[RMDB]
RNA sequence: GGGAACGACUCGAGUAGAGUCGAAAACUGCGCGUCCCAUUUGACGAAGUGACGCACCAAUGCGGCCUGGUCGUGCGCCGUGUGCAGCCAGUCGAUCCAUGGGCGGCGCUUGUCCGCAUCCACCGGAAACGCUAAGCAUGUUCGCAUGCUUAGCGUUAAAAGAAACAACAACAACAAC
Reactivity to 2A3 in 0.01 (KOAc 150mM, MgCl2 10mM, bicine 150mM(pH8.5), 24C), signal-to-noise 3, nucleotides 027 to 126: c050u040g010c010g010c000g050u060c000c020c030a040u170u090u080g100a050c020g040a130a040g020u020g060a020c010g000c030a060c010c050a050a100u100g000c020g030g000c030c020u120g010g030u140c090g090u090g060c010g030c020c030g090u080g070u100g060c020a000g020c010c030a020g060u110c030g030a100u040c040c010a040u050g000g040g040c050g000g000c010g000c070u040u090g030u020c000c000g000c040a060u080c020c010a030c030c050g040g060a090
Reactivity to DMS in 0.01 (KOAc 150mM, MgCl2 10mM, bicine 150mM(pH8.5), 24C), signal-to-noise 3, nucleotides 027 to 126: c100u010g020c060g020c060g010u000c010c030c010a110u000u000u010g020a070c080g010a070a080g030u000g010a070c010g000c000a100c030c200a080a060u010g000c000g000g020c030c000u000g010g010u010c140g010u000g010c050g020c050c120g020u010g000u000g000c010a140g030c030c060a070g010u010c070g030a090u000c040c250a090u010g000g010g010c040g000g010c020g010c040u000u010g010u000c000c020g010c060a050u010c050c040a090c110c030g000g000a120
Overview
Structure probing data (2A3 and DMS) for a 177-nucleotide construct. Conditions: 150 mM KOAc, 10 mM MgCl2 and 150 mM bicine (pH 8.5), 24 C. The 2A3 profile rests on 2,787 reads. DMS adducts were read by reverse transcription with MarathonRT. The data come from the RNA Mapping Database (RMDB), library OK2TST.